Background:
The data come from the RNA Mapping Database (RMDB), library M2RFPK. Chemical mapping of a 207-nucleotide RNA with 2A3. Conditions: 150 mM KOAc, 10 mM MgCl2 and 150 mM bicine (pH 8.5), 24 C. As a SHAPE reagent, 2A3 marks flexible, mostly unpaired nucleotides at the ribose 2'-OH.

[RMDB]
RNA sequence: GGGAACGACUCGAGUAGAGUCGAAAAUGGGCGAUCGCUCGCUGUUUUUGUGGCUGGCUUACAGCGGGCUGGAGGAGCCGGGAGCGGAGGCGGAGGACCGAGCCAAAAACGUCAGCCGAGGCCGGGCAAUAUCGUGGACUGUUCGCAGUCCACGAAACUAGGUAACAUGCUUCGGCAUGUUACCUAGAAAAGAAACAACAACAACAAC
Reactivity to 2A3 in 0.01 (KOAc 150mM, MgCl2 10mM, bicine 150mM(pH8.5), 24C), signal-to-noise 1, nucleotides 027 to 156: u060g030g000g000c080g050a100u190c090g030c030u020c040g010c010u010g090u020u090u040u120u090g100u070g080g040c040u040g000g000c000u080u060a000c040a010g020c060g000g000g010c020u030g010g020a070g000g030a020g050c070c110g020g000g000a010g010c060g020g060a060g020g040c020g020g040a020g020g000a010c020c010g010a040g040c010c040a150a040a000a000a000c040g020u060c010a060g000c010c000g060a010g040g000c050c060g000g030g000c100a130a040u210a020u040c000g000u000g000g000a020c000u000g050u030u040c290g030c080a000g010u000c000c000a000c000g000a000a000a000